[RMDB]
RNA sequence: GGGAACGACUCGAGUAGAGUCGAAAAGAUGUUCGCUGAUUCGUCAGCCGCAUGCCCAGGUGGCCGCGAUCUUCAAGGCUACGGCGCGGAUUGGUCCGCGCUGAUCGUUUUCCUCCAACGACGCUAUAAAAGGAACGAAGGUUCGCCUUCGUUCCAAGUCACAGACAAGGUUCGCCUUGUCUGUGACAAAAGAAACAACAACAACAAC
Reactivity to 2A3 in 0.01 (KOAc 150mM, MgCl2 10mM, bicine 150mM(pH8.5), 24C), signal-to-noise 2, nucleotides 027 to 156: g070a020u020g020u140u200c070g000c000u010g020a020u010u100c240g030u010c150a000g010c000c000g040c010a020u130g000c000c000c010a010g040g000u020g000g000c020c010g100c070g030a000u020c010u000u010c000a000a010g000g000c000u010a010c000g000g000c000g000c010g000g040a090u100u250g170g120u160c000c010g000c000g000c000u000g000a020u000c010g000u020u000u220u040c050c010u050c050c030a030a050c050g090a040c020g030c180u160a070u130a290a100a060a020g000g000a000a000c000g000a000a000g000g030u050u130c190g000c010c000u000u000c000g020u000u020c000c010a000a000
Chemical mapping of a 207-nucleotide RNA with 2A3. As a SHAPE reagent, 2A3 marks flexible, mostly unpaired nucleotides at the ribose 2'-OH. Values cover nucleotides 27 to 156. The RNA was probed in 150 mM KOAc, 10 mM MgCl2 and 150 mM bicine (pH 8.5) at 24 C. The 2A3 profile rests on 1,065 reads.